An RNA of 177 nucleotides, treated with 2A3 and DMS and read out base by base. The reactions ran in a buffer of 150 mM KOAc, 10 mM MgCl2 and 150 mM bicine (pH 8.5), at 24 C. For 2A3, 2,767 sequencing reads were counted. For DMS the reverse transcriptase was MarathonRT.

RNA sequence: GGGAACGACUCGAGUAGAGUCGAAAAGAUAUGGACGUAAUGGGACAUGAGUCCCACUCGGAAACGAGUGGACUCAACAGCCCAUACGUCCUAAGUCAAAAGGUUUCCUCCUUCGGGAGGAAACCAAGUCUUGUCUCUACUUCGGUAGAGACAAGACAAAAGAAACAACAACAACAAC
Reactivity to 2A3 in 0.01 (KOAc 150mM, MgCl2 10mM, bicine 150mM(pH8.5), 24C), signal-to-noise 1, nucleotides 027 to 126: g010a000u000a020u060g010g000a010c000g020u020a300a260u060g000g050g010a030c190a300u300g010a090g000u090c100c000c000a040c000u010c000g020g000a000a000a000c000g000a010g030u000g000g000a010c000u000c040a030a110c080a040g020c010c000c010a000u010a010c000g000u000c000c010u000a000a020g010u010c010a000a000a030a220g000g000u010u000u000c000c000u010c000c020u070u100c240g150g000g020a000g000g000a030a000a010c010c000a000a010
Reactivity to DMS in 0.01 (KOAc 150mM, MgCl2 10mM, bicine 150mM(pH8.5), 24C), signal-to-noise 1, nucleotides 027 to 126: g000a000u000a050u000g000g000a040c000g000u000a100a070u000g020g000g010a040c180a200u010g000a000g000u010c200c200c070a000c000u000c010g050g000a020a020a050c010g000a000g030u010g000g000a010c010u000c030a010a060c300a240g000c000c000c000a020u000a000c030g010u000c000c000u000a000a000g000u010c000a070a100a150a110g020g000u000u000u000c000c000u000c010c010u000u040c210g020g010g000a030g020g000a000a000a070c000c010a040a030